RNA sequence: GGGAACGACUCGAGUAGAGUCGAAAAGGCGAGAGGUUUGUCCUGGUCCACGCAAGGCAGAUAGGGGAGAUAGUGCUUCUCUUAUGAGAAGGGCGUCGUGAACACAGUUAAGUGGCUCGUCUGUAGCUCCAAUCCUGGACUUCGGUCCAGGAUUGGAAAAAGAAACAACAACAACAAC
Reactivity to DMS in 0.01 (KOAc 150mM, MgCl2 10mM, bicine 150mM(pH8.5), 24C), signal-to-noise 2, nucleotides 027 to 126: g000g000c020g000a040g000a130g010g010u020u040u000g020u020c040c010u000g020g000u000c000c000a130c060g040c140a100a110g000g020c000a060g020a110u030a070g020g000g000g020a150g000a060u010a050g030u020g000c030u000u000c010u000c010u000u040a120u050g030a040g000a030a010g000g020g020c030g000u010c020g040u050g020a080a060c000a080c050a070g020u000u020a050a020g010u000g000g000c030u000c010g010u000c040u000g000u020a140g000c130
Reactivity to 2A3 in 0.01 (KOAc 150mM, MgCl2 10mM, bicine 150mM(pH8.5), 24C), signal-to-noise 1, nucleotides 027 to 126: g080g050c070g000a000g000a120g010g000u000u000u070g070u090c000c030u010g040g070u040c010c010a030c000g070c000a020a150g100g000c030a050g020a130u060a090g000g110g000g000a020g000a040u140a050g130u100g100c000u000u090c000u030c000u170u300a260u290g010a000g040a000a000g010g010g000c000g010u110c020g000u010g060a060a000c110a000c000a010g050u070u230a230a000g020u000g010g050c020u000c020g000u040c000u010g080u010a010g010c030